[RMDB]
RNA sequence: GGGAACGACUCGAGUAGAGUCGAAAACCGUAGGGCUCCUCUGGCGAUAAGGAUGCCAACACAGUUUCGAAAGAGACUGUGGACGUAUAUCCUUUUGACGCCAGGGAGCCCUAAACGGAAAUCGUUAGCAUCAUACUUCGGUAUGAUGCUAACGAAAUCAUUAAUACCCCUUCGGGGGUAUUAAUGAAAAAGAAACAACAACAACAAC
Reactivity to DMS in 0.01 (KOAc 150mM, MgCl2 10mM, bicine 150mM(pH8.5), 24C), signal-to-noise 1, nucleotides 027 to 156: c000c010g040u000a010g010g020g050c000u000c010c000u010c010u000g000g050c000g010a220u000a050a030g020g030a020u010g020c020c010a070a180c000a010c000a020g010u000u000u000c010g000a200a220a250g010a030g020a000c010u000g030u000g030g000a040c180g010u000a130u000a070u010c010c000u000u010u010u010g030a170c020g020c010c000a050g020g020g000a000g000c000c010c000u000a000a020a060c000g010g010a140a110a110u010c000g030u010u000a000g000c040a010u000c000a000u020a040c000u000u000c280g060g000u000a000u000g020a000u010g010c010u000a000a000c000g000a010a060a090